[RMDB]
RNA sequence: GGGAACGACUCGAGUAGAGUCGAAAACUAGUAAGCGUGUAUCAUUAGUUCGCGUUGAUUACGUCCCUGCCCUUUGUACACACCGCCCGUCGCGUCUAUUGAUUAGGUAGCAUCAUGAGUGAGGCAGGCCAUGUUCCGAAUUCGUUCGGAACAUGGCAAAAGAAACAACAACAACAAC
Reactivity to DMS in 0.01 (KOAc 150mM, MgCl2 10mM, bicine 150mM(pH8.5), 24C), signal-to-noise 1, nucleotides 027 to 126: c040u000a090g000u000a100a040g000c100g000u030g010u020a010u030c080a150u020u000a140g000u000u000c020g020c050g050u000u000g000a060u010u020a130c140g000u040c000c000c000u020g000c010c010c000u000u000u000g060u040a020c070a100c100a100c030c020g000c020c000c020g030u040c100g000c090g000u050c020u000a080u010u000g000a140u030u050a040g040g030u020a060g000c070a070u030c130a050u070g000a110g000u040g100a120g000g070c030a040g000
Reactivity to 2A3 in 0.01 (KOAc 150mM, MgCl2 10mM, bicine 150mM(pH8.5), 24C), signal-to-noise 2, nucleotides 027 to 126: c000u030a000g040u090a020a000g020c030g020u000g030u150a040u140c020a170u180u070a100g110u110u070c030g000c000g050u050u170g040a270u130u150a010c010g070u060c000c020c040u000g010c000c000c000u050u030u010g100u130a000c010a020c000a000c030c000g070c020c000c020g020u070c000g010c040g050u010c000u020a060u000u160g070a080u150u020a000g160g000u000a030g000c010a000u040c000a000u220g090a060g140u010g010a040g170g000c090a030g030